[RMDB]
RNA sequence: GGGAACGACUCGAGUAGAGUCGAAAAGAUAUGGAUACUGGCUUUUGACGCUCUGGUAUCGGAAACGAUACGCAGAGCGAUAAGCCAAUCCUAAGUCAAAAUCCUCCUCGGUUCGCCGAGGAGGAAACAUACAAGUCAACUUCGGUUGACUUGUAUGAAAAGAAACAACAACAACAAC
Reactivity to 2A3 in 0.01 (KOAc 150mM, MgCl2 10mM, bicine 150mM(pH8.5), 24C), signal-to-noise 4, nucleotides 027 to 126: g020a010u060a030u130g000g000a030u130a270c110u070g010g040c030u110u070u110u280g300a190c140g000c000u010c010u000g030g010u000a000u010c000g000g010a050a050a010c000g000a000u010a010c140g070c300a000g000a010g000c000g000a000u000a000a010g000c000c000a000a000u000c000c000u010a120a010g040u010c030a050a030a020a300u000c010c000u000c000c010u010c010g000g060u070u100c300g030c090c000g010a000g000g010a000g000g000a000a000a010
Reactivity to DMS in 0.01 (KOAc 150mM, MgCl2 10mM, bicine 150mM(pH8.5), 24C), signal-to-noise 5, nucleotides 027 to 126: g010a030u010a270u000g000g000a010u000a110c300u000g010g000c000u000u000u010u000g010a240c080g010c000u000c000u010g000g010u000a000u000c000g000g010a080a040a130c010g010a020u000a000c000g020c000a000g010a000g010c000g010a010u000a010a010g000c000c000a030a020u000c000c000u000a030a160g010u010c030a100a070a110a110u000c000c000u000c000c010u000c000g000g010u000u010c210g020c010c000g000a010g000g000a000g000g000a000a000a040